RNA sequence: GGGAACGACUCGAGUAGAGUCGAAAAGCAUCAGAUAGGAUUCAACAGUUAUAAGUGCAACUUCUAUGUGGUUAAGUUUUGAGCUUGGUGACAACCGUCAACCACAUGGACCAAGCUGGCACCAUUAAGAUAACGGCAGUUUCGACUGCCGUUAUCUAAAAGAAACAACAACAACAAC
Reactivity to DMS in 0.01 (KOAc 150mM, MgCl2 10mM, bicine 150mM(pH8.5), 24C), signal-to-noise 2, nucleotides 027 to 126: g010c110a080u010c040a070g010a060u020a040g000g000a110u000u000c110a040a130c070a020g000u010u010a090u000a100a080g020u000g010c070a120a090c080u000u000c000u000a010u000g020u010g020g000u010u000a080a020g000u000u010u010u020g010a080g020c050u020u000g010g010u010g010a070c090a130a110c270c160g000u010c090a020a070c000c010a050c030a000u000g000g000a080c300c070a020a050g010c040u000g010g000c060a120c030c010a050u000u020a060
Reactivity to 2A3 in 0.01 (KOAc 150mM, MgCl2 10mM, bicine 150mM(pH8.5), 24C), signal-to-noise 1, nucleotides 027 to 126: g020c010a000u090c000a000g070a090u080a010g100g000a020u090u070c000a080a000c000a140g090u120u150a200u060a260a130g010u030g060c010a020a030c010u060u000c030u030a020u010g030u010g000g000u050u090a060a020g010u010u040u180u270g160a130g050c020u030u080g080g090u040g040a040c030a130a080c090c050g010u040c020a000a000c000c010a000c010a040u020g030g010a010c010c010a010a020g020c020u100g080g050c050a010c000c010a020u130u150a070
Structure probing data (DMS and 2A3) for a 177-nucleotide construct. It was measured as part of the RMDB library OK2TRN. For DMS, 896 sequencing reads were counted. DMS adducts were read by reverse transcription with MarathonRT. 2A3 adducts were read by reverse transcription with SuperScript II with manganese. Conditions: 150 mM KOAc, 10 mM MgCl2 and 150 mM bicine (pH 8.5), 24 C.